[RMDB]
RNA sequence: GGGAACGACUCGAGUAGAGUCGAAAAACGUUGAUAUGGAUUUACUCCGAGGAGACGAACUACCACGAACAGCGGAAACUCUACCCGUGGCGUCUCCGUUUGACGAGUAAGUCCUAAGUCAACAUGCGGCGGGGCACGUUCGCGUGCCCCAAAAGAAACAACAACAACAAC
Reactivity to 2A3 in 0.01 (KOAc 150mM, MgCl2 10mM, bicine 150mM(pH8.5), 24C), signal-to-noise 2, nucleotides 027 to 129: a000c100g000u000u000g000a020u000a010u030g000g000a000u010u010u020a030c000u000c000c000g010a050g000g000a000g040a000c020g020a010a040c090u200a070c110c000a000c030g010a040a000c000a050g000c000g000g000a000a000a000c000u000c010u010a040c010c020c000g020u000g020g010c000g010u000c000u000c000c000g010u070u110u020g010a010c000g000a000g000u000a000a010g000u000c000c000u000a000a000g000u000c000a000a000c010a010u080g070c050g080g010c060
An RNA of 170 nucleotides, treated with 2A3 and read out base by base.
Conditions: 150 mM KOAc, 10 mM MgCl2 and 150 mM bicine (pH 8.5), 24 C.
For 2A3 the reverse transcriptase was SuperScript II with manganese.
High 2A3 reactivity points to a flexible backbone, as in loops and unpaired stretches.
It was measured as part of the RMDB library 15KLIB.
Reactivities are given for positions 27 through 129.